[RMDB]
RNA sequence: GGGAACGACUCGAGUAGAGUCGAAAAGAACUUACAAGGGCAAGAGCAGAGUCCUUGUAAGGGCUUUACACGUCAAGUUCACAGACGUGUAAGGCCCGUCGCCCUUCGGGGCGACGUUCACGGCAUUUCGAUGCCGUGCAGCCUGUUCGCAGGCUGCCAGUAGUAUCCCCUUCGGGGGAUACUACUGAAAAGAAACAACAACAACAAC
Reactivity to 2A3 in 0.01 (KOAc 150mM, MgCl2 10mM, bicine 150mM(pH8.5), 24C), signal-to-noise 2, nucleotides 027 to 156: g000a010a000c000u010u000a010c000a000a000g010g010g000c030a110a080g040a070g220c120a070g070a050g120u000c000c010u000u000g000u000a000a000g010g000g010c000u020u000u000a000c000a000c010g000u000c040a070a280g080u260u290c110a150c060a190g010a000c000g000u000g000u000a000a000g000g010c000c000c000g000u000c000g010c010c010c000u020u050c260g020g000g010g000c000g000a000c000g000u000u010c020a010c000g000g000c010a020u090u100u140c170g060a030u010g000c000c000g000u010g000c000a000g000c000c000u020g020u060u040c150g000c060a000g010g000c000u000g000c000
Structure probing data (2A3) for a 207-nucleotide construct. Values cover nucleotides 27 to 156. The reactions ran in a buffer of 150 mM KOAc, 10 mM MgCl2 and 150 mM bicine (pH 8.5), at 24 C. 2A3 adducts were read by reverse transcription with SuperScript II with manganese. As a SHAPE reagent, 2A3 marks flexible, mostly unpaired nucleotides at the ribose 2'-OH.